[RMDB]
RNA sequence: GGGAACGACUCGAGUAGAGUCGAAAACUGUACAUCUUCGGAUGUACAGAAAAAGAUAUGGAUAAGUCUGAGGCAAGGUUGACUAUCGGAAACGAUAGCAACUGAUGACCCUCAGAGCUUAUCCUAAGUCAAAAACUAGUUCGUUCGCGAACUAGAACAUUAAACCAAUAUUCGUAUUGGUUUAAUGAAAAGAAACAACAACAACAAC
Reactivity to 2A3 in 0.01 (KOAc 150mM, MgCl2 10mM, bicine 150mM(pH8.5), 24C), signal-to-noise 7, nucleotides 027 to 156: c000u000g000u000a000c000a010u000c000u030u080c270g150g000a000u000g000u000a000c000a000g000a030a030a000a010a010g060a020u080a030u090g000g000a000u000a000a000g020u010c000u000g000a000g010g010c070a100a130g040g010u040u020g100a300c000u000a000u000c010g050g010a100a070a040c010g000a000u000a000g000c000a000a000c000u000g020a050u100g030a040c020c000c010u000c000a000g000a000g010c000u000u000a000u000c000c000u010a080a010g020u010c030a030a020a000a110a170c000u000a000g000u000u000c010g020u030u050c300g000c010g120a000a000c000u000a000g010a010a020
Reactivity to DMS in 0.01 (KOAc 150mM, MgCl2 10mM, bicine 150mM(pH8.5), 24C), signal-to-noise 4, nucleotides 027 to 156: c010u000g010u000a020c010a000u010c010u000u020c300g020g010a010u000g000u030a010c010a020g000a020a050a070a120a170g010a120u000a300u000g000g000a020u000a010a010g020u000c000u000g010a040g000g000c010a080a120g000g020u000u000g000a220c010u000a000u000c000g000g010a200a130a260c010g030a020u000a000g020c000a010a000c010u000g000a030u000g000a040c300c000c000u000c010a010g010a050g030c010u010u000a000u000c000c000u000a010a070g010u010c040a060a050a120a120a120c000u000a020g020u010u000c000g020u000u000c300g040c040g020a010a010c010u000a010g000a050a170
This 207-nucleotide RNA was probed chemically with 2A3 and DMS. Values are in units of 0.01, from 0 to 300, in steps of 10. It was measured as part of the RMDB library RNAMAK. Conditions: 150 mM KOAc, 10 mM MgCl2 and 150 mM bicine (pH 8.5), 24 C. As a SHAPE reagent, 2A3 marks flexible, mostly unpaired nucleotides at the ribose 2'-OH.